Annotation
Structure probing data (DMS and 2A3) for a 177-nucleotide construct. High 2A3 reactivity points to a flexible backbone, as in loops and unpaired stretches. It was measured as part of the RMDB library TTRDEL. Reactivities are rounded to 0.1 and cut off at 0 and 3.
[RMDB]
RNA sequence: GGGAACGACUCGAGUAGAGUCGAAAAGAUAUGGAUUCGUUCCAUGUUGGCGAUGAAAUCGGAAACGAUGGAGCCAGUGUGGAGACGAAUCCUAAGUCAAAUCGACCUAUCUUCGGAUAGGUCGAAAGCCAUAUUCUGUCUUCGGACAGAAUAUGGCAAAAGAAACAACAACAACAAC
Reactivity to DMS in 0.01 (KOAc 150mM, MgCl2 10mM, bicine 150mM(pH8.5), 24C), signal-to-noise 1, nucleotides 027 to 126: g090a070u000a300u000g000g000a030u000u000c010g000u000u000c000c000a000u000g000u010u000g000g000c000g030a090u000g020a100a110a000u080c000g010g000a110a130a210c000g000a030u000g000g000a040g010c020c020a000g030u000g010u000g010g000a080g000a020c000g000a000a010u000c020c000u000a010a010g000u000c040a100a120a190u010c000g000a000c000c010u000a000u000c010u010u000c210g080g000a000u000a000g000g000u000c000g000a000a040a080
Reactivity to 2A3 in 0.01 (KOAc 150mM, MgCl2 10mM, bicine 150mM(pH8.5), 24C), signal-to-noise 1, nucleotides 027 to 126: g030a040u060a040u120g040g000a000u000u000c000g000u020u020c000c000a000u000g010u030u020g040g110c160g140a300u030g000a090a050a010u010c030g020g070a100a040a060c020g040a020u030g000g030a010g000c020c000a000g020u000g030u010g000g030a120g080a040c010g030a010a000u000c000c000u010a060a000g000u010c000a060a000a180u010c000g000a010c010c000u000a000u010c010u000u110c260g120g000a000u020a000g160g010u000c000g010a000a000a000